The record gives the reactivity of an RNA of 177 nucleotides to 2A3 and DMS. Conditions: 150 mM KOAc, 10 mM MgCl2 and 150 mM bicine (pH 8.5), 24 C. For DMS the reverse transcriptase was MarathonRT. For DMS, 2,416 sequencing reads were counted. Reactivities are rounded to 0.1 and cut off at 0 and 3.
RNA sequence: GGGAACGACUCGAGUAGAGUCGAAAACUCGUUGACCGGGCCGACACCGUCGAUGAGCUUCAGAUCGUCCAGAGCGGCAACCCCUUUCACGACGGCUGGCGGGCGUUGGCCAGGAUGGAUAUGGUCGGUCAUUACGAUACUUCGGUAUCGUAAUGACAAAAGAAACAACAACAACAAC
Reactivity to 2A3 in 0.01 (KOAc 150mM, MgCl2 10mM, bicine 150mM(pH8.5), 24C), signal-to-noise 5, nucleotides 027 to 126: c010u010c010g030u020u050g040a070c070c030g030g010g010c020c020g010a020c020a010c020c010g000u010c030g060a170u120g060a010g020c000u110u070c040a140g010a290u120c060g020u000c020c040a030g020a030g100c060g020g000c030a050a140c020c010c010c020u020u080u090c070a050c060g080a010c010g060g030c040u010g010g010c000g000g000g020c080g010u010u020g040g020c000c010a020g050g020a060u070g040g050a070u070a090u230g110g030u040c030g020
Reactivity to DMS in 0.01 (KOAc 150mM, MgCl2 10mM, bicine 150mM(pH8.5), 24C), signal-to-noise 2, nucleotides 027 to 126: c020u000c030g000u010u000g020a060c030c000g000g000g000c050c000g000a080c040a170c000c120g000u000c010g020a060u000g010a090g000c080u040u020c120a020g000a020u020c010g000u000c010c060a130g020a160g030c230g000g010c100a090a050c190c010c020c020u000u010u020c070a130c210g000a080c070g000g000c040u000g010g020c130g000g020g010c170g030u000u010g020g010c010c030a030g000g000a150u000g000g000a000u020a050u010g010g020u000c020g000